Overview:
Conditions: 150 mM KOAc, 10 mM MgCl2 and 150 mM bicine (pH 8.5), 24 C. Structure probing data (2A3 and DMS) for a 207-nucleotide construct. The data come from the RNA Mapping Database (RMDB), library OK3TST.

RNA sequence: GGGAACGACUCGAGUAGAGUCGAAAAAGGAUGAAUCCAUCGUACAAGCCAUGUUGAUAAACUACUUACAUUACGGCGAUAUGGUAAGUAUACCUAUCGUUCGAUGCAUGUUAGAUAACGGAGCGACCAUGGAUAAGACAACGGACAACAACUAUCCUACAGCCGUAAGGUUCGCCUUACGGCUGUAAAAAGAAACAACAACAACAAC
Reactivity to 2A3 in 0.01 (KOAc 150mM, MgCl2 10mM, bicine 150mM(pH8.5), 24C), signal-to-noise 5, nucleotides 027 to 156: a010g070g010a040u080g030a060a070u000c010c000a010u030c060g040u060a130c050a130a030g040c000c020a060u080g010u040u040g090a120u110a180a170a050c060u100a010c000u020u030a020c000a020u030u060a040c040g030g000c010g010a000u010a040u130g000g010u050a110a100g180u130a100u070a170c000c000u020a000u000c000g050u100u300c030g030a030u030g050c050a010u010g000u040u060a010g000a090u060a090a040c060g060g000a060g020c030g010a000c020c000a010u030g000g000a010u020a060a040g050a010c040a070a020c140g100g020a010c050a090a010c010a010a020c110u040a030u060c000c000
Reactivity to DMS in 0.01 (KOAc 150mM, MgCl2 10mM, bicine 150mM(pH8.5), 24C), signal-to-noise 1, nucleotides 027 to 156: a010g040g050a100u000g010a080a130u010c030c000a070u010c020g030u000a050c090a160a180g000c020c070a070u000g010u000u000g030a150u010a140a130a100c050u020a030c010u000u010a030c030a020u000u000a040c070g000g000c010g030a030u000a020u000g020g000u000a020a170g020u010a200u000a020c000c030u010a010u000c010g040u000u000c100g010a020u000g000c000a050u000g010u010u000a040g020a080u010a100a110c040g040g020a090g030c030g010a130c100c010a100u020g020g000a120u000a030a150g000a100c060a000a030c020g030g020a080c030a080a060c040a060a070c050u010a090u000c050c010